[RMDB]
RNA sequence: GGGAACGACUCGAGUAGAGUCGAAAAUGAUUCAUUAAAAGCAGCAGUUCAAAACGGAGCAAAUGCUGUGUAUUUAGGUGGUAAAGACUUUAGUGCUAGAGCAUCUGCAAAUAACUUUGAUAGAAAUCGUCGUAGUGCAUUUCGAUGCACUACGACGAAAAGAAACAACAACAACAAC
Reactivity to 2A3 in 0.01 (KOAc 150mM, MgCl2 10mM, bicine 150mM(pH8.5), 24C), signal-to-noise 1, nucleotides 027 to 126: u240g030a090u090u140c140a190u290u220a000a000a060a000g050c060a000g000c080a080g030u030u060c100a030a000a060a060c120g110g110a140g120c300a100a000a000u070g000c000u000g000u000g000u170a000u000u130u170a130g000g000u030g150g050u050a110a110a000g030a020c060u250u000u060a030g030u090g000c160u160a000g000a000g070c000a000u000c000u000g030c060a000a000a000u090a020a000c030u000u000u070g000a000u050a160g190a140a000a000u050

Structure probing data (2A3) for a 177-nucleotide construct.
Source: RMDB library OK1LIB, as collected in RNAgym.
2A3 adducts were read by reverse transcription with SuperScript II with manganese.